Chemical mapping of a 177-nucleotide RNA with DMS and 2A3. For 2A3, 959 sequencing reads were counted. For DMS, 1,078 sequencing reads were counted.
[RMDB]
RNA sequence: GGGAACGACUCGAGUAGAGUCGAAAAUUCUGGCCAGGACGCAGCUGCUGCGCACUUCGCGCGGGGGCCCACGGCAGGCAGCACAACCCUCCCUCCAUCUCCCACUCCACCGGCGGCCGAAGCCCCAAUGCAUGCCGUUUUUCGAAACGGCAUGCAUAAAAGAAACAACAACAACAAC
Reactivity to DMS in 0.01 (KOAc 150mM, MgCl2 10mM, bicine 150mM(pH8.5), 24C), signal-to-noise 1, nucleotides 027 to 126: u000u040c030u040g000g010c000c000a070g010g020a160c030g000c120a050g010c020u000g000c000u000g000c070g000c050a070c190u000u050c170g000c000g050c000g010g000g030g010g000c080c090c000a100c110g000g070c050a090g000g010c060a050g000c030a050c160a260a240c050c000c000u050c050c060c020u060c000c030a050u070c040u020c000c000c050a090c050u000c000c000a000c000c080g040g010c050g000g000c050c000g000a180a210g000c000c000c000c000a080
Reactivity to 2A3 in 0.01 (KOAc 150mM, MgCl2 10mM, bicine 150mM(pH8.5), 24C), signal-to-noise 1, nucleotides 027 to 126: u030u000c030u050g090g000c000c020a020g010g060a000c040g000c040a040g000c020u120g000c000u000g000c000g020c020a010c060u070u130c080g030c000g010c020g020g000g010g000g000c000c000c000a050c060g020g000c030a000g000g040c050a050g000c050a010c030a110a090c010c000c000u000c020c000c010u000c000c000a010u030c040u040c030c000c000a010c020u060c020c010a030c000c040g000g000c000g070g000c000c000g040a030a020g010c000c000c000c000a010